This 177-nucleotide RNA was probed chemically with 2A3 and DMS.
[RMDB]
RNA sequence: GGGAACGACUCGAGUAGAGUCGAAAAAGUCGGCCUACGCACUUGCACCAGGACAACCAUCGCCUGGCUUGGGCUACCUUCCUGCGUCACACCUGUUAAUACGCUAGCCGCACCAGCAUGGGGUCGAGAUACUCGUACGUUUCGACGUACGAGUAUCAAAAGAAACAACAACAACAAC
Reactivity to 2A3 in 0.01 (KOAc 150mM, MgCl2 10mM, bicine 150mM(pH8.5), 24C), signal-to-noise 2, nucleotides 027 to 126: a000g090u040c020g030g000c000c010u030a050c080g000c010a050c050u080u090g000c050a050c010c010a020g000g000a050c030a110a110c090c040a060u130c120g060c020c010u030g020g000c020u060u110g050g000g000c010u030a050c000c020u010u100c010c000u020g040c010g040u050c020a040c020a040c050c020u050g030u100u070a120a030u120a120c070g010c050u030a010g040c010c000g080c050a020c020c000a030g050c020a040u110g030g000g000g030u040c020g010a060
Reactivity to DMS in 0.01 (KOAc 150mM, MgCl2 10mM, bicine 150mM(pH8.5), 24C), signal-to-noise 3, nucleotides 027 to 126: a040g030u000c050g030g030c020c000u000a040c120g020c030a100c070u010u010g010c110a170c030c000a060g010g000a070c090a060a140c100c100a060u000c120g020c030c020u000g010g010c080u000u000g010g000g000c010u000a020c090c050u000u010c020c030u010g010c070g010u000c060a110c110a090c030c040u010g010u010u000a100a090u010a050c080g000c030u000a060g020c020c030g000c070a090c050c050a050g040c050a110u010g000g000g010g020u000c020g000a110

It was measured as part of the RMDB library OK2TRN. The RNA was probed in 150 mM KOAc, 10 mM MgCl2 and 150 mM bicine (pH 8.5) at 24 C.